[RMDB]
An RNA of 177 nucleotides, treated with DMS and 2A3 and read out base by base.
The data come from the RNA Mapping Database (RMDB), libraries RFM100 and RFMREP.
Conditions: 150 mM KOAc, 10 mM MgCl2 and 150 mM bicine (pH 8.5), 24 C.
For DMS the reverse transcriptase was MarathonRT.
RNA sequence: GGGAACGACUCGAGUAGAGUCGAAAAGGUCUAGUACUUAAUGAUACAUUCCUUCGCCAGCUCAUAAUAAGAAAAAACAGAAGGAUCUCUAUAGGAAGCAAAUCGGAAUUUGAUGAUGAGUUUGCGCACUGGCAAAACUAUUCGUAGUUUUGCCAGUAAAAGAAACAACAACAACAAC
Reactivity to DMS in 0.01 (KOAc 150mM, MgCl2 10mM, bicine 150mM(pH8.5), 24C), signal-to-noise 4, nucleotides 027 to 126: g000g020u000c020u000a130g000u010a050c050u010u020a070a100u020g010a130u010a060c070a060u010u000c020c010u000u010c010g000c010c030a030g000c020u050c030a030u000a050a070u020a100a120g000a020a030a070a100a070a120c130a070g010a090a090g020g010a070u000c040u010c050u020a090u020a090g010g000a040a060g020c060a020a070a080u000c030g000g030a050a130u000u010u000g000a080u010g000a060u010g030a050g020u000u000u000g000c060g010c220
Reactivity to 2A3 in 0.01 (KOAc 150mM, MgCl2 10mM, bicine 150mM(pH8.5), 24C), signal-to-noise 7, nucleotides 027 to 126: g040g000u020c050u080a070g040u080a080c050u100u150a110a060u260g070a030u020a070c020a040u010u020c000c000u020u020c010g010c000c010a010g020c000u010c040a050u040a140a030u180a190a050g200a060a090a030a020a000a010c100a050g090a110a020g070g060a030u020c020u000c020u050a160u110a120g110g070a080a020g010c060a020a050a100u060c040g060g030a080a130u070u050u080g040a060u040g020a020u010g000a000g000u020u010u000g010c010g010c010